[RMDB]
An RNA of 207 nucleotides, treated with 2A3 and DMS and read out base by base. Reactivities are rounded to 0.1 and cut off at 0 and 3. Values cover nucleotides 27 to 156. For 2A3, 7,514 sequencing reads were counted.
RNA sequence: GGGAACGACUCGAGUAGAGUCGAAAAUCCUAAGUCGGACGCAGAUACCCAACUAUCAUGUUGUCAGGCUCUCGGAAACGAGAGCCUUGGAUUUACAUGAACAAUGUUGGGUGUAGUCCGAUAUGGAAAAAGUAUUUCCGCUUCGGCGGAAAUACAAGUUUAUUUAUCAGUUCGCUGAUAAAUAAACAAAAGAAACAACAACAACAAC
Reactivity to 2A3 in 0.01 (KOAc 150mM, MgCl2 10mM, bicine 150mM(pH8.5), 24C), signal-to-noise 4, nucleotides 027 to 156: u020c010c000u030a080a010g020u000c010g000g000a000c010g040c100a050g040a210u070a030c000c010c000a000a000c000u030a020u070c000a000u000g010u000u010g010u010c010a000g000g000c010u000c000u000c000g030g020a110a050a040c010g000a000g020a000g030c010c020u000u040g030g000a000u150u090u130a000c000a000u000g010a070a030c110a160a180u150g000u010u000g000g000g000u000g000u010a010g000u000c000c010g000a000u010a040u050g010g020a080a080a010a020a000g000u000a000u010u000u000c000c000g000c010u020u030c090g150g000c010g000g000a000a000a000u010a000c000a000a000
Reactivity to DMS in 0.01 (KOAc 150mM, MgCl2 10mM, bicine 150mM(pH8.5), 24C), signal-to-noise 3, nucleotides 027 to 156: u000c000c000u000a050a270g030u010c000g000g020a020c010g020c120a190g030a150u000a050c010c000c010a010a010c010u010a200u000c010a010u000g020u000u000g010u010c000a070g010g000c000u000c000u000c000g010g010a190a140a280c000g010a000g020a010g010c000c000u000u000g020g010a050u000u000u000a020c000a010u000g000a090a110c120a100a110u010g010u000u000g000g020g010u010g030u000a080g000u000c000c000g020a000u010a030u010g000g010a040a070a110a170a190g010u000a010u000u000u000c010c000g020c010u000u010c300g060g000c010g000g000a000a000a000u010a000c000a040a120